RNA sequence: GGGAACGACUCGAGUAGAGUCGAAAAGGUUAAGCCAUGCAUGUGCAAGCGAAGCGUAAGUGGAGCGGCGCAAGGCUCAGUAACGGGCGAGUAUUUGAUCUCCUAGAGUGGAUAUCCUCUGUAACCGAGUUUCUUGGUGUUUCGACACCAAGAAACUAAAAGAAACAACAACAACAAC
Reactivity to DMS in 0.01 (KOAc 150mM, MgCl2 10mM, bicine 150mM(pH8.5), 24C), signal-to-noise 2, nucleotides 027 to 126: g000g020u000u010a140a070g040c000c040a060u010g010c110a080u000g030u030g000c060a170a070g010c020g000a300a290g000c080g000u050a110a130g040u010g000g000a300g060c080g000g020c100g050c020a020a090g000g000c010u000c070a080g020u000a020a100c070g000g000g030c110g010a080g020u000a090u000u010u020g040a090u000c000u030c000c010u000a070g000a050g000u050g000g000a090u000a030u010c040c000u000c040u020g000u000a030a090c030c050g000
Reactivity to 2A3 in 0.01 (KOAc 150mM, MgCl2 10mM, bicine 150mM(pH8.5), 24C), signal-to-noise 2, nucleotides 027 to 126: g100g000u120u060a060a000g060c020c000a000u060g100c020a030u030g010u030g000c060a120a110g000c030g040a020a010g000c000g060u090a050a050g030u040g080g040a000g000c000g030g000c000g000c030a040a070g030g010c010u020c040a090g010u070a100a040c040g000g000g010c010g000a030g020u100a080u080u140u300g080a050u010c010u040c010c000u040a050g000a020g050u090g010g000a030u040a050u170c020c000u050c080u030g100u060a070a010c030c000g000

An RNA of 177 nucleotides, treated with DMS and 2A3 and read out base by base. It was measured as part of the RMDB library RFM100. The RNA was probed in 150 mM KOAc, 10 mM MgCl2 and 150 mM bicine (pH 8.5) at 24 C.